The record gives the reactivity of an RNA of 177 nucleotides to DMS and 2A3. DMS adducts were read by reverse transcription with MarathonRT. For DMS, 2,357 sequencing reads were counted. The reactions ran in a buffer of 150 mM KOAc, 10 mM MgCl2 and 150 mM bicine (pH 8.5), at 24 C. It was measured as part of the RMDB library OK2TST.
RNA sequence: GGGAACGACUCGAGUAGAGUCGAAAAAUCUUCUGCGACAGGUCGAUGGCCGUUUCGUCGUUGAGCGCAAGCGGGCCGACCGGCAUACCGGCCAUGCGGGCGGCAUUUUCGAUCAUCGCCGCCGGGAGCGGCGAGUUUUAUUCGUAAAACUCGCCGCAAAAGAAACAACAACAACAAC
Reactivity to DMS in 0.01 (KOAc 150mM, MgCl2 10mM, bicine 150mM(pH8.5), 24C), signal-to-noise 2, nucleotides 027 to 126: a090u000c060u000u000c040u000g010c020g010a080c080a070g020g010u010c000g000a080u010g010g020c020c010g010u000u000u010c060g020u000c060g050u000u010g010a220g030c000g020c230a050a070g010c020g000g010g030c030c010g010a030c100c040g000g000c050a050u000a080c060c000g000g010c010c100a070u010g010c050g040g000g010c010g000g000c080a070u010u000u000u000c090g010a070u000c060a180u000c100g020c010c130g010c010c030g030g000g010a120
Reactivity to 2A3 in 0.01 (KOAc 150mM, MgCl2 10mM, bicine 150mM(pH8.5), 24C), signal-to-noise 1, nucleotides 027 to 126: a000u000c010u160u020c020u090g030c020g070a070c040a130g020g020u000c000g040a100u080g030g080c000c010g000u020u050u050c020g030u020c040g090u050u220g090a080g020c060g000c070a020a040g040c020g020g000g000c020c000g010a060c000c000g000g000c010a030u070a100c000c020g030g030c010c060a040u060g040c040g050g020g000c030g020g000c030a040u160u100u040u180c040g040a030u050c010a010u080c040g000c000c000g010c000c070g000g030g030a070